[RMDB]
RNA sequence: GGGAACGACUCGAGUAGAGUCGAAAAGUGGACGCUGCCUGGCCAGCGGCAGCCCGCUCUGCGCGUCAGGAACGGCGCCACCCGCGCCGUACGCGUUAUCUGGCGCGCCGGCCGGCGCGCAUCGCGAAAAUGAUACGAUGUUCGCAUCGUAUCAUUUAAAAGAAACAACAACAACAAC
Reactivity to 2A3 in 0.01 (KOAc 150mM, MgCl2 10mM, bicine 150mM(pH8.5), 24C), signal-to-noise 1, nucleotides 027 to 126: g020u060g000g070a060c040g020c020u110g000c040c070u110g050g020c030c020a030g030c000g050g000c020a030g000c000c010c010g000c000u090c060u030g000c000g000c000g020u060c050a110g100g100a090a050c000g020g010c030g010c010c030a150c010c050c000g000c000g010c000c020g080u100a050c050g000c010g000u070u030a060u080c020u040g000g000c050g000c020g040c060c000g010g000c020c000g050g000c020g040c050g000c060a060u060c050g000c020g010a040
Reactivity to DMS in 0.01 (KOAc 150mM, MgCl2 10mM, bicine 150mM(pH8.5), 24C), signal-to-noise 3, nucleotides 027 to 126: g030u010g000g000a080c060g000c010u000g040c020c020u000g020g010c040c060a260g010c050g020g000c080a070g000c040c020c040g010c010u000c130u020g000c010g010c020g000u010c160a090g010g000a100a050c000g020g010c010g030c020c070a070c160c140c100g030c020g010c040c080g000u010a060c070g000c060g030u000u000a040u010c060u000g000g010c280g050c050g050c220c300g020g000c070c020g010g030c090g090c070g030c070a040u000c040g010c030g000a070